[RMDB]
This 177-nucleotide RNA was probed chemically with DMS and 2A3.
RNA sequence: GGGAACGACUCGAGUAGAGUCGAAAACGGUGCAGCAGGUCAGCUGUUAGGGAAGGAGUAAGAUCUUCCUUUCCACUCUAACUAACGUGUCAGGAGUACUGUCCUUGUGUGCCUUGCUAGGCGCUGACUUGAUGCCGAUCUUCGGAUCGGCAUCAAGAAAAGAAACAACAACAACAAC
Reactivity to DMS in 0.01 (KOAc 150mM, MgCl2 10mM, bicine 150mM(pH8.5), 24C), signal-to-noise 1, nucleotides 027 to 126: c120g020g000u000g020c030a080g000c030a080g020g000u000c050a040g000c040u000g020u000u000a160g020g000g040a050a000g030g000a060g000u010a190a140g000a130u000c060u020u000c030c030u000u010u000c010c050a240c070u020c110u000a040a060c050u010a110a050c130g000u000g040u000c010a050g020g000a190g020u000a040c110u000g010u000c030c030u010u000g030u000g010u000g010c000c080u010u000g040c180u000a090g030g000c060g000c000u000g000a160
Reactivity to 2A3 in 0.01 (KOAc 150mM, MgCl2 10mM, bicine 150mM(pH8.5), 24C), signal-to-noise 2, nucleotides 027 to 126: c090g000g000u120g050c030a050g000c010a020g030g220u000c060a010g030c020u020g030u070u090a050g020g000g030a020a030g000g030a010g000u100a070a130g070a150u000c010u130u000c010c020u000u020u000c000c000a020c020u040c000u040a040a030c000u000a030a100c040g120u060g100u190c050a060g000g060a040g080u050a120c010u040g090u160c000c060u140u060g190u000g000u040g100c000c070u040u110g080c080u150a020g000g000c040g020c030u000g020a030

For DMS, 1,024 sequencing reads were counted. For 2A3, 1,187 sequencing reads were counted. Conditions: 150 mM KOAc, 10 mM MgCl2 and 150 mM bicine (pH 8.5), 24 C.